The record gives the reactivity of an RNA of 177 nucleotides to DMS and 2A3.
RNA sequence: GGGAACGACUCGAGUAGAGUCGAAAACUUGGCAUUGGCCGGUGAUUCGCAUUGGGCGGGCGGAUUGAUAAGAUAAGGUUCGUCUGUAUUUCGCCUCAAAUACUAUAUGUACCCCCACUCUUAUCACACCUGCAUCAUAUUUCGAUAUGAUGCAGGUAAAAGAAACAACAACAACAAC
Reactivity to DMS in 0.01 (KOAc 150mM, MgCl2 10mM, bicine 150mM(pH8.5), 24C), signal-to-noise 4, nucleotides 027 to 126: c020u020u030g010g040c040a140u050u020g000g010c000c010g000g010u010g010a090u010u010c050g020c070a120u020u010g020g010g000c060g000g000g020c040g010g010a100u010u020g000a020u000a030a040g020a020u020a150a220g000g010u000u010c050g020u000c050u020g010u000a040u010u000u000c080g020c040c010u000c120a060a050a080u010a060c030u020a080u030a050u050g000u030a090c060c020c000c020c060a110c120u010c020u000u000a020u020c060a110c250
Reactivity to 2A3 in 0.01 (KOAc 150mM, MgCl2 10mM, bicine 150mM(pH8.5), 24C), signal-to-noise 9, nucleotides 027 to 126: c020u090u180g020g000c030a160u070u170g130g010c020c020g000g040u070g020a090u060u060c050g000c090a060u060u110g030g020g010c020g030g000g010c020g020g030a030u030u100g020a020u070a090a090g020a020u070a080a050g030g000u020u050c010g000u020c020u040g040u040a120u010u050u060c080g020c020c000u060c030a030a050a030u080a020c100u070a020u070a070u300g050u100a080c000c010c000c000c000a040c030u030c010u010u050a020u060c000a020c010
Overview: Reactivities are given for positions 27 through 126. Conditions: 150 mM KOAc, 10 mM MgCl2 and 150 mM bicine (pH 8.5), 24 C. It was measured as part of the RMDB library OK1LIB.